[RMDB]
Chemical mapping of a 177-nucleotide RNA with DMS and 2A3. 2A3 adducts were read by reverse transcription with SuperScript II with manganese.

RNA sequence: GGGAACGACUCGAGUAGAGUCGAAAAAAGCAGUUUUGUCAUCAGCCUGGAAGGCUUCAAGACAGUAAUAAGAAAAGAGUAGGAAUCCUAAGGCACAACUGCUUGUGAUUCACCUAGAUUUGUGAGACCAAUCAUAGCUAUUCGUAGCUAUGAUUGGAAAAGAAACAACAACAACAAC
Reactivity to DMS in 0.01 (KOAc 150mM, MgCl2 10mM, bicine 150mM(pH8.5), 24C), signal-to-noise 9, nucleotides 027 to 126: a020a010g000c000a020g010u000u000u000u000g010u000c060a120u010c180a090g010c030c020u000g010g020a120a130g010g000c050u000u000c070a070a100g010a100c090a090g000u010a070a090u020a090a110g010a080a080a090a100g010a080g010u000a080g000g000a090a070u000c020c020u000a080a070g000g010c010a040c070a020a030c020u000g010c000u000u000g010u000g000a140u000u000c060a080c010c040u010a080g000a140u010u000u010g000u010g010a140g010a240
Reactivity to 2A3 in 0.01 (KOAc 150mM, MgCl2 10mM, bicine 150mM(pH8.5), 24C), signal-to-noise 5, nucleotides 027 to 126: a010a000g020c020a000g000u020u010u050u040g030u020c020a120u020c030a090g030c000c010u070g100g050a110a040g070g000c000u070u040c070a060a030g060a050c050a020g080u110a030a150u110a120a030g140a100a100a010a000g110a020g060u150a040g050g120a040a030u010c020c010u050a080a050g000g030c010a010c010a010a020c010u000g000c000u010u000g050u040g000a080u080u060c040a160c130c040u050a110g050a300u090u130u150g070u070g060a040g050a040
Overview: The data come from the RNA Mapping Database (RMDB), library OK2TST. The DMS profile rests on 13,262 reads. The RNA was probed in 150 mM KOAc, 10 mM MgCl2 and 150 mM bicine (pH 8.5) at 24 C.